Description
The data come from the RNA Mapping Database (RMDB), library OK2TRN. Structure probing data (2A3 and DMS) for a 177-nucleotide construct.

RNA sequence: GGGAACGACUCGAGUAGAGUCGAAAAACAAGCGGUGUGGCCCGAGGCCGUCACACAGCACCUGUGCUGAGAGUGAGCUGACGUGGACGGCGGCACCGUGGCCGUGGCAGAGGCACCAUCCCUCCACGGCCGGGUAACAUUUCGAUGUUACCCGGCCAAAAGAAACAACAACAACAAC
Reactivity to 2A3 in 0.01 (KOAc 150mM, MgCl2 10mM, bicine 150mM(pH8.5), 24C), signal-to-noise 2, nucleotides 027 to 126: a000c130a150a010g020c030g000g000u040g000u050g220g000c000c080c020g030a060g050g060c020c000g020u010c000a000c000a000c020a010g000c010a040c030c110u160g090u060g140c110u180g060a080g040a040g250u160g100a050g020c100u030g060a090c100g030u100g040g090a010c000g010g020c000g040g010c010a010c020c020g000u060g030g020c000c000g000u020g010g000c140a020g040a300g140g000c020a010c010c040a090u300c010c020c000u000c000c020a000c000
Reactivity to DMS in 0.01 (KOAc 150mM, MgCl2 10mM, bicine 150mM(pH8.5), 24C), signal-to-noise 2, nucleotides 027 to 126: a100c110a200a080g000c010g000g010u000g020u000g020g030c040c020c060g010a300g000g000c060c010g010u000c010a000c010a180c000a060g010c010a060c050c190u020g000u000g010c040u010g000a070g020a100g020u010g010a090g010c060u000g000a080c100g020u000g010g010a220c290g000g010c010g010g000c000a030c010c010g020u000g000g020c000c000g020u000g000g010c270a020g000a050g010g000c100a230c150c130a150u000c020c010c000u010c000c010a030c070

The reactions ran in a buffer of 150 mM KOAc, 10 mM MgCl2 and 150 mM bicine (pH 8.5), at 24 C.
High DMS reactivity at an A or C suggests that its Watson-Crick edge is free.
For DMS the reverse transcriptase was MarathonRT.
For 2A3, 1,707 sequencing reads were counted.
Reactivities are given for positions 27 through 126.